[RMDB]
RNA sequence: GGGAACGACUCGAGUAGAGUCGAAAAGACGUCGAUGUGAGUUUAAUACCACCUCGUAAACGUGAUUACACAAGUAAGUCUAAAGGGGGUAAAAAAUAAUGACUGAACAAUCAGUGAAAAACACUCCGAAACCAACAUGUUUCGACAUGUUGGUUUCAAAAGAAACAACAACAACAAC
Reactivity to DMS in 0.01 (KOAc 150mM, MgCl2 10mM, bicine 150mM(pH8.5), 24C), signal-to-noise 2, nucleotides 027 to 126: g000a160c090g030u000c010g020a050u020g000u000g010a160g000u000u000u010a130a120u010a050c000c010a050c010c010u010c010g000u000a050a100a090c120g000u010g010a180u000u020a030c120a060c090a150a110g000u000a020a070g000u030c030u010a030a180a130g000g000g030g030g000u020a000a030a130a080a030a060u000a070a040u000g010a000c010u000g010a080a110c200a070a070u010c110a040g020u000g000a070a110a050a030a050c170a060c160u000c220c220
Reactivity to 2A3 in 0.01 (KOAc 150mM, MgCl2 10mM, bicine 150mM(pH8.5), 24C), signal-to-noise 1, nucleotides 027 to 126: g050a010c020g040u040c030g040a030u010g050u040g020a160g040u030u100u220a230a070u230a050c000c000a000c000c030u010c020g100u070a000a210a040c040g000u020g050a110u110u080a030c110a010c010a150a000g000u020a020a000g000u030c040u100a030a120a110g030g010g000g000g050u070a110a100a000a030a000a030u150a040a050u090g020a020c010u010g000a020a020c010a010a040u130c040a000g000u060g050a080a020a000a040a000c040a000c040u020c060c110
Source: RMDB library OK2TST, as collected in RNAgym. This 177-nucleotide RNA was probed chemically with DMS and 2A3. Values cover nucleotides 27 to 126. DMS adducts were read by reverse transcription with MarathonRT. 2A3 adducts were read by reverse transcription with SuperScript II with manganese.